[RMDB]
RNA sequence: GGGAACGACUCGAGUAGAGUCGAAAAACACUCGAAAUCCUGACAAUUUAUGCAUCAAUAUCCGUAUACCCUCUGGUGUAGUACGCCCCAAGCAUGACUUGCCUCACUCCCGCAUUCCAGAACCACGAUUCAGAGUUUAUUAAUUACAUAAAUGAAACAGUGGCUAAAUAUUCGUAUUUAGCCACUGAAAAGAAACAACAACAACAAC
Reactivity to 2A3 in 0.01 (KOAc 150mM, MgCl2 10mM, bicine 150mM(pH8.5), 24C), signal-to-noise 2, nucleotides 027 to 156: a000c000a000c000u000c020g000a020a000a040u000c020c010u050g030a020c090a040a040u090u160u130a060u110g010c030a030u000c020a130a140u050a060u150c030c020g070u080a030u080a140c000c000c000u000c070u070g010g000u040g000u010a030g020u000a030c010g010c000c000c000c000a030a000g000c000a030u040g040a050c000u000u050g030c000c000u040c010a030c050u030c030c000c010g000c010a020u050u050c010c000a000g010a010a000c020c010a050c100g140a030u200u020c040a010g000a030g100u030u030u070a060u040u120a080a030u200u130a010c000a070u300a060a080a110u300g030a100a010a000
Reactivity to DMS in 0.01 (KOAc 150mM, MgCl2 10mM, bicine 150mM(pH8.5), 24C), signal-to-noise 2, nucleotides 027 to 156: a060c050a070c050u030c070g020a110a140a040u020c040c030u000g010a100c070a090a080u020u000u010a060u020g010c060a070u020c050a070a080u000a080u000c010c030g050u010a100u000a090c040c050c030u000c070u000g010g020u000g000u000a090g000u000a090c070g030c080c020c020c040a100a130g000c030a030u010g010a070c070u000u020g020c020c020u000c020a030c080u000c000c000c000g010c060a180u030u000c020c020a100g020a050a050c020c000a070c070g000a220u010u010c070a090g000a220g020u000u010u010a040u050u020a060a090u000u010a150c030a010u010a080a050a110u010g010a190a060a150